[RMDB]
RNA sequence: GGGAACGACUCGAGUAGAGUCGAAAAGAUUUUGAUCAUGCGGAACGCUGUGAUGUGUACACCUGCCAUGUACGCAUCAUUCUGUGCAUCUGGCAGGUGAUGCACAGUUGAUCAGAUCGUCAUUACAGGGUUGGCAUGUGUUCGCAUAUGCCAACCCAAAAGAAACAACAACAACAAC
Reactivity to DMS in 0.01 (KOAc 150mM, MgCl2 10mM, bicine 150mM(pH8.5), 24C), signal-to-noise 3, nucleotides 027 to 126: g010a030u000u000u020u010g030a030u010c010a000u000g000c010g000g040a170a180c100g020c010u020g020u040g000a060u000g000u000g000u000a010c020a020c010c000u000g010c010c010a140u000g000u020a050c080g000c020a010u060c170a050u030u000c120u020g010u010g010c010a060u020c050u000g000g010c020a030g000g000u000g000a010u000g010c010a020c020a000g020u020u010g000a010u000c020a030g000a000u000c010g020u030c150a090u050u040a100c190a160
Reactivity to 2A3 in 0.01 (KOAc 150mM, MgCl2 10mM, bicine 150mM(pH8.5), 24C), signal-to-noise 6, nucleotides 027 to 126: g000a010u070u100u140u110g000a000u000c000a000u040g010c020g160g160a260a080c200g010c020u020g080u130g180a050u000g010u000g000u000a000c010a020c010c000u000g010c000c000a040u110g010u020a010c040g010c000a050u040c000a020u170u010c030u100g010u010g000c000a010u010c030u020g040g020c010a010g000g050u010g000a000u010g000c010a000c000a000g000u020u010g010a000u000c000a000g010a010u010c010g060u030c040a100u040u160a120c090a120